[RMDB]
RNA sequence: GGGAACGACUCGAGUAGAGUCGAAAACUAAGCAGUUAGGCUGGGAAGCAGGCAAAUCCACUUCCCGUGAAGGCUGAGCUGUGACAGCGAGGGAAAUUUAGUACCGAAGUUCCUGAUUCCACACUGCGUUUUCAGUUACGUUCGCGUAACUGAAAACAAAAGAAACAACAACAACAAC
Reactivity to 2A3 in 0.01 (KOAc 150mM, MgCl2 10mM, bicine 150mM(pH8.5), 24C), signal-to-noise 2, nucleotides 027 to 126: c010u030a020a030g000c020a000g000u030u070a060g010g020c060u080g040g000g030a010a020g010c180a140g020g030c060a190a100a100u230c010c000a010c020u020u000c000c030c010g000u060g090a130a020g060g020c030u010g010a020g010c010u010g010u020g030a000c130a030g040c010g040a150g080g030g050a050a040a040u200u300u080a190g020u040a040c000c070g000a070a010g020u040u010c000c000u000g020a080u110u000c000c000a120c020a000c120u150g030c070
Reactivity to DMS in 0.01 (KOAc 150mM, MgCl2 10mM, bicine 150mM(pH8.5), 24C), signal-to-noise 2, nucleotides 027 to 126: c010u010a060a300g010c030a020g030u010u010a300g000g040c040u010g020g000g010a020a020g000c090a120g040g030c180a100a110a090u030c040c030a180c080u010u000c000c010c040g020u000g000a110a140g010g000c010u010g000a150g020c020u000g000u000g020a070c150a040g020c030g010a160g000g000g000a110a080a080u000u000u000a010g010u010a060c080c030g000a050a070g000u000u000c010c010u030g000a150u010u040c020c070a020c140a050c090u000g030c250